[RMDB]
An RNA of 207 nucleotides, treated with DMS and 2A3 and read out base by base. Conditions: 150 mM KOAc, 10 mM MgCl2 and 150 mM bicine (pH 8.5), 24 C. Source: RMDB library OK3TST, as collected in RNAgym. The DMS profile rests on 2,404 reads. For 2A3 the reverse transcriptase was SuperScript II with manganese.
RNA sequence: GGGAACGACUCGAGUAGAGUCGAAAAAUGGCCCCCUUGGCUGCUACUUAAAAUUCUGGCAGGCACAAGGGGAUGUGAUGUCUCUACCUCUUUGUGGCAUGAGGUUAAGAAGCAUCACUGGAUACAGGGAAAGAAAAGCCUAUCUCCCAAGGCUGUCUAGGACAAUCGAAUUCGUUCGAUUGUCCUAAAAAGAAACAACAACAACAAC
Reactivity to DMS in 0.01 (KOAc 150mM, MgCl2 10mM, bicine 150mM(pH8.5), 24C), signal-to-noise 1, nucleotides 027 to 156: a120u000g020g000c010c000c010c010c010u000u000g000g040c080u010g010c000u010a010c060u010u000a020a080a130a160u000u000c040u010g030g010c040a030g010g020c050a080c030a060a010g000g020g000g010a000u000g030u000g000a040u000g000u020c000u000c010u000a160c000c000u000c020u000u030u030g030u000g010g000c100a200u000g000a030g020g030u000u000a030a030g000a000a000g010c020a030u000c010a000c010u000g000g000a170u000a110c050a110g000g000g000a030a060a160g000a030a060a130a080g010c010c010u010a090u000c120u000c020c000c030a200a150g000g020c010u000g020u020c020
Reactivity to 2A3 in 0.01 (KOAc 150mM, MgCl2 10mM, bicine 150mM(pH8.5), 24C), signal-to-noise 3, nucleotides 027 to 156: a000u090g120g000c010c040c000c000c000u000u000g030g000c010u000g000c000u000a060c030u160u270a100a160a150a200u260u070c080u090g010g000c000a030g080g140c050a010c020a190a000g000g000g020g000a020u050g000u000g000a000u000g080u020c000u010c000u010a160c030c000u030c030u090u110u280g190u140g080g050c010a020u080g000a000g020g000u020u050a140a030g000a030a010g010c000a000u000c000a000c010u000g030g000a010u100a210c070a050g070g020g070a110a180a050g090a050a170a170a000g020c020c000u050a130u020c100u020c010c010c010a000a000g020g000c000u020g070u160c080